[RMDB]
RNA sequence: GGGAACGACUCGAGUAGAGUCGAAAAGGUGUGCGAUAAGCCUCAUAAGGUACGGUAAGCCUCAUGGUUGUCACAGAGAUGUGACAACGCUUACUAUGAGCGUACCUGCUUAUUAUGAGCGCACACAGCAGUGCUGAACAUUCGUGUUCAGCACUGCAAAAGAAACAACAACAACAAC
Reactivity to 2A3 in 0.01 (KOAc 150mM, MgCl2 10mM, bicine 150mM(pH8.5), 24C), signal-to-noise 2, nucleotides 027 to 126: g100g000u000g000u000g010c010g010a070u030a260a050g070c000c000u000c000a000u000a020a020g010g010u020a010c140g000g010u020a000a050g020c050c000u020c020a000u020g120g010u010u020g000u020c000a010c000a000g030a000g010a080u020g010u000g000a000c000a000a000c000g000c000u080u150a070c050u120a040u030g000a010g010c050g000u020a010c000c000u010g000c010u070u100a120u110u010a020u050g020a010g060c010g000c010a010c000a000c010a000
Reactivity to DMS in 0.01 (KOAc 150mM, MgCl2 10mM, bicine 150mM(pH8.5), 24C), signal-to-noise 2, nucleotides 027 to 126: g010g010u000g010u000g010c010g000a180u000a040a120g020c300c010u000c010a020u010a030a040g010g030u010a000c180g070g020u000a280a020g000c170c060u000c020a000u000g010g000u000u010g010u000c000a000c010a000g000a180g010a180u000g010u000g000a000c000a000a000c020g000c180u000u000a110c150u010a000u000g020a070g010c020g010u000a010c010c020u000g000c020u000u020a050u010u000a000u020g000a040g000c000g000c000a000c000a010c020a120